[RMDB]
RNA sequence: GGGAACGACUCGAGUAGAGUCGAAAAGAUAUGGAUCGAUGUAGAUGCAUGGGUCGGAAACGACCAACAUGAACUACAUCGCAGAUAUCGAUCCUAAGUCAAAGGUAGUCACUUCGGUGACUACCAAGUCUGGUAUCUUGUUCGCAAGAUACCAGACAAAAGAAACAACAACAACAAC
Reactivity to 2A3 in 0.01 (KOAc 150mM, MgCl2 10mM, bicine 150mM(pH8.5), 24C), signal-to-noise 3, nucleotides 027 to 126: g000a000u050a010u050g120g080a100u160c010g020a000u010g000u030a030g000a100u300g030c000a000u000g020g010g000u010c020g020g020a060a060a030c020g000a000c020c010a030a080c020a000u000g010a050a030c000u000a000c000a000u030c000g040c020a010g020a050u020a010u010c020g010a040u000c010c010u050a180a040g150u160c190a210a050a020g000g000u010a010g020u000c010a000c010u030u090c300g100g000u000g000a000c000u000a000c010c010a020a010
Reactivity to DMS in 0.01 (KOAc 150mM, MgCl2 10mM, bicine 150mM(pH8.5), 24C), signal-to-noise 3, nucleotides 027 to 126: g010a000u000a030u000g000g010a200u000c000g020a040u010g010u000a000g020a080u010g000c000a000u000g020g000g030u000c010g020g000a120a070a190c000g020a000c000c000a080a110c040a000u000g000a140a080c000u000a030c000a020u000c020g020c120a300g010a050u000a020u000c010g010a150u010c010c000u000a050a090g040u000c120a080a130a140g000g000u000a000g000u000c000a000c000u000u020c300g050g010u000g000a010c000u010a000c000c000a020a020